[RMDB]
RNA sequence: GGGAACGACUCGAGUAGAGUCGAAAAGGGGUCGAGCCUGGAAGCAUAAGCUUUUGACGAGCUGAAGCCUCCACGGCUCGAUAAGCUUAUGAACUACUUCUGGGCUCGACGGAGGCACCCAAACAUUACCCAUGCCCUUCGGGGCAUGGGUAAUGAAGAUUACAGGAAGAUUCGUCUUCCUGUAAUCAAAAGAAACAACAACAACAAC
Reactivity to 2A3 in 0.01 (KOAc 150mM, MgCl2 10mM, bicine 150mM(pH8.5), 24C), signal-to-noise 1, nucleotides 027 to 156: g050g000g040g000u000c010g000a000g010c000c000u020g010g000a000a000g010c000a000u000a010a010g010c000u110u170u220u300g180a150c090g000a000g040c020u030g020a120a010g010c020c050u050c060c050a030c000g000g050c000u000c000g000a000u040a010a000g010c000u030u000a010u020g020a090a050c050u250a080c010u300u000c000u000g000g000g010c020u000c000g000a010c000g000g000a010g000g040c010a030c000c000c010a010a090a000c000a000u000u000a010c000c000c000a000u010g000c020c000c000u040u110c290g060g000g000g000c020a000u000g000g000g000u000a000a000u000g000a000a000
Source: RMDB library RNAMAK, as collected in RNAgym.
This 207-nucleotide RNA was probed chemically with 2A3.
Reactivities are rounded to 0.1 and cut off at 0 and 3.
For 2A3, 2,182 sequencing reads were counted.